[RMDB]
RNA sequence: GGGAACGACUCGAGUAGAGUCGAAAAGAAAAUCCCAAGCAUAGCAUAGGAUAGCAUAGCAUAGCAUAGCAUAGCAUAGCAUAGCAUAGCAUAGCAUAGCAUAGCAUAGCAUAGCAUACAAAAAAAAUACCUCUAUGGAAUUCGUUCCAUAGAGGUAAAAAGAAACAACAACAACAAC
Reactivity to DMS in 0.01 (KOAc 150mM, MgCl2 10mM, bicine 150mM(pH8.5), 24C), signal-to-noise 2, nucleotides 027 to 126: g020a060a090a140a150u000c010c010c000a130a130g000c040a060u000a040g000c040a030u000a110g010g020a040u000a040g000c000a070u000a020g000c030a040u000a060g010c000a050u010a050g000c030a100u000a060g010c030a030u020a090g000c020a060u000a060g030c020a040u000a020g030c030a030u010a060g000c040a050u000a080g010c030a020u000a060g010c100a020u000a060g000c020a020u010a040g000c050a010u000a050c070a010a000a000a000a070a040a100a160
Reactivity to 2A3 in 0.01 (KOAc 150mM, MgCl2 10mM, bicine 150mM(pH8.5), 24C), signal-to-noise 1, nucleotides 027 to 126: g040a030a090a000a070u030c000c000c000a010a000g000c010a040u100a040g000c000a020u030a040g060g150a050u050a040g000c010a030u010a020g000c040a040u020a030g000c000a040u040a040g020c000a030u030a020g050c000a020u040a030g000c010a060u040a020g030c020a030u070a030g010c020a020u060a000g050c010a020u040a020g000c000a020u050a030g010c020a040u040a010g000c000a020u020a050g010c000a020u080a070c130a070a090a030a010a000a010a030a020